Structure probing data (2A3 and DMS) for a 207-nucleotide construct.
DMS adducts were read by reverse transcription with MarathonRT.
[RMDB]
RNA sequence: GGGAACGACUCGAGUAGAGUCGAAAAAGUGAGUAUGGCUCGUUACGACGAGCCAUACUCACAACGGUUUUCCUAAAUCGUCGUGAGACGGACCUUGGAAAACCUAGUAUUUAAAUAACUCGGUCAAAUUAGCCUAGAUCCUUCGGGAUCUAGGCAAUCGAUUUAUGUAGUUCGCUACAUAAAUCGAAAAAGAAACAACAACAACAAC
Reactivity to 2A3 in 0.01 (KOAc 150mM, MgCl2 10mM, bicine 150mM(pH8.5), 24C), signal-to-noise 3, nucleotides 027 to 156: a010g000u000g000a000g010u000a000u000g010g000c010u030c030g010u020u060a120c260g010a000c000g000a080g000c000c000a000u000a000c000u000c000a000c000a000a000c000g000g010u000u010u000u000c000c000u000a000a000a020u060c000g010u000c010g020u060g150a120g000a020c010g000g000a010c000c020u020u020g000g000a000a000a010a000c000c000u000a010g010u010a080u050u200u110a110a200a180u130a080a030c060u030c110g000g020u030c040a060a090a150u150u150a070g000c000c000u010a000g000a000u000c010c000u040u090c240g050g010g000a000u010c000u000a000g000g000c000a000a000
Reactivity to DMS in 0.01 (KOAc 150mM, MgCl2 10mM, bicine 150mM(pH8.5), 24C), signal-to-noise 1, nucleotides 027 to 156: a100g020u010g000a020g050u000a000u000g030g010c000u000c000g020u000u000a150c260g020a160c000g000a030g000c000c000a010u010a000c040u000c000a000c000a010a040c130g040g000u000u000u000u000c000c000u020a030a020a020u000c000g020u000c000g010u000g000a300g000a060c000g020g010a030c010c040u000u020g010g000a010a010a010a000c000c000u000a040g010u000a090u000u000u000a060a100a240u010a090a090c070u000c040g060g020u000c070a120a090a150u000u010a090g010c020c000u000a000g010a020u000c020c000u000u000c300g030g030g000a000u000c000u000a000g010g000c000a000a000
The RNA was probed in 150 mM KOAc, 10 mM MgCl2 and 150 mM bicine (pH 8.5) at 24 C. The 2A3 profile rests on 2,663 reads.